The data come from the RNA Mapping Database (RMDB), library OK2TST. Chemical mapping of a 177-nucleotide RNA with DMS and 2A3. For DMS, 11,582 sequencing reads were counted. The reactions ran in a buffer of 150 mM KOAc, 10 mM MgCl2 and 150 mM bicine (pH 8.5), at 24 C.
RNA sequence: GGGAACGACUCGAGUAGAGUCGAAAAUGGGCAGUCUGAACUACGGAAGCUCAUCUCAGAAGAUAGCGUCGACGUUCGUGCUGUUGUCACGAAACACGGAACUUCACGUGGCUGCAAAGGACAGGAGUACGACUAGGUUAUUCGUAACCUAGUCGUAAAAAGAAACAACAACAACAAC
Reactivity to DMS in 0.01 (KOAc 150mM, MgCl2 10mM, bicine 150mM(pH8.5), 24C), signal-to-noise 8, nucleotides 027 to 126: u010g000g000g040c010a080g010u000c040u010g010a100a090c160u010a150c080g010g010a080a080g010c010u010c060a050u000c020u000c100a160g010a120a080g000a060u000a050g010c040g010u000c060g020a110c150g010u000u000c010g030u010g010c060u010g020u010u000g010u000c030a030c060g000a050a040a070c050a080c040g010g010a060a080c080u000u000c040a110c060g020u000g000g010c040u000g000c070a050a090a100g000g010a070c100a080g000g000a130g000
Reactivity to 2A3 in 0.01 (KOAc 150mM, MgCl2 10mM, bicine 150mM(pH8.5), 24C), signal-to-noise 4, nucleotides 027 to 126: u080g000g030g000c030a050g130u000c030u080g040a080a080c060u120a050c110g020g020a040a020g010c030u010c040a030u020c040u020c010a120g060a180a010g030a070u070a040g020c010g060u050c030g050a080c050g040u020u030c010g030u040g020c010u150g080u220u120g040u080c010a010c030g040a050a060a000c040a010c040g030g000a070a010c030u070u050c040a030c090g050u010g030g020c020u030g010c070a130a010a050g040g020a030c010a030g030g060a030g080